[RMDB]
RNA sequence: GGGAACGACUCGAGUAGAGUCGAAAACGUAGAUACUUCGGUAUCUACGAAAAUAACGCUGGCGUGCGACACAGCCGGAGCUAGCCUCGGAUAGUCUCAGUAAAACAGCAUGGUUCGCCAUGCUGAACGGAGUAGAGUACUUCGGUACUCUACUCCGAAAAGAAACAACAACAACAAC
Reactivity to DMS in 0.01 (KOAc 150mM, MgCl2 10mM, bicine 150mM(pH8.5), 24C), signal-to-noise 2, nucleotides 027 to 126: c000g010u000a000g000a010u000a000c000u010u020c200g010g000u000a000u000c000u000a010c010g010a050a080a100a090u000a050a100c040g020c030u000g010g000c060g000u010g000c070g020a090c200a090c120a160g020c000c070g000g000a150g010c070u010a100g050c030c000u000c090g000g010a110u000a070g010u000c020u000c050a170g020u010a030a040a040a300c080a000g000c000a000u000g000g020u000u010c230g000c000c000a000u000g000c000u000g000a010a040
Reactivity to 2A3 in 0.01 (KOAc 150mM, MgCl2 10mM, bicine 150mM(pH8.5), 24C), signal-to-noise 1, nucleotides 027 to 126: c010g000u000a000g000a000u010a010c030u040u040c280g100g000u000a000u010c010u010a010c000g000a000a000a000a020u070a030a010c040g000c050u010g060g010c050g100u090g010c040g100a040c040a000c000a130g020c040c020g040g000a020g010c030u040a000g020c000c030u020c060g030g040a080u060a180g090u010c000u020c050a070g120u180a010a120a040a080c030a000g020c000a000u010g000g070u030u040c220g000c090c000a030u030g000c000u000g010a000a000